Conditions: 150 mM KOAc, 10 mM MgCl2 and 150 mM bicine (pH 8.5), 24 C. Structure probing data (DMS and 2A3) for a 177-nucleotide construct. For DMS, 2,568 sequencing reads were counted. Reactivities are rounded to 0.1 and cut off at 0 and 3. For DMS the reverse transcriptase was MarathonRT. It was measured as part of the RMDB library OK2TST. The 2A3 profile rests on 1,925 reads.

RNA sequence: GGGAACGACUCGAGUAGAGUCGAAAAAGGUGUGUCAGCAGGAAAGGCGUUACCACAAGCUAGUUAGGCACAGUGCGGAGAAGUUCACGCUGUCCGAACUCGGCGUGCAACUGCUAGUGGCAUUAAAAUGCAGCAUUUAGUUCGCUAAAUGCUGCAUAAAAGAAACAACAACAACAAC
Reactivity to DMS in 0.01 (KOAc 150mM, MgCl2 10mM, bicine 150mM(pH8.5), 24C), signal-to-noise 3, nucleotides 027 to 126: a040g020g010u000g010u000g010u000c030a060g030c040a070g010g000a080a110a120g020g000c060g020u000u000a070c090c020a090c060a050a110g020c020u000a040g000u010u010a070g000g000c140a030c030a050g020u000g010c050g000g010a020g000a100a050g000u000u000c040a040c040g000c010u000g000u020c050c040g020a050a030c050u010c080g010g000c020g000u000g020c130a010a060c020u010g010c030u000a060g000u010g010g000c080a050u020u010a030a080a100
Reactivity to 2A3 in 0.01 (KOAc 150mM, MgCl2 10mM, bicine 150mM(pH8.5), 24C), signal-to-noise 2, nucleotides 027 to 126: a000g050g020u050g010u000g020u030c030a010g030c010a010g040g150a050a060a010g080g000c070g030u090u110a060c010c000a020c020a070a000g000c030u070a030g020u090u050a050g000g000c030a020c030a030g050u050g070c050g050g020a040g010a140a100g060u070u020c010a010c040g000c000u020g000u070c020c010g030a020a020c000u050c100g000g000c010g010u040g010c040a060a030c010u020g010c020u030a050g090u010g120g010c000a000u110u260a060a100a030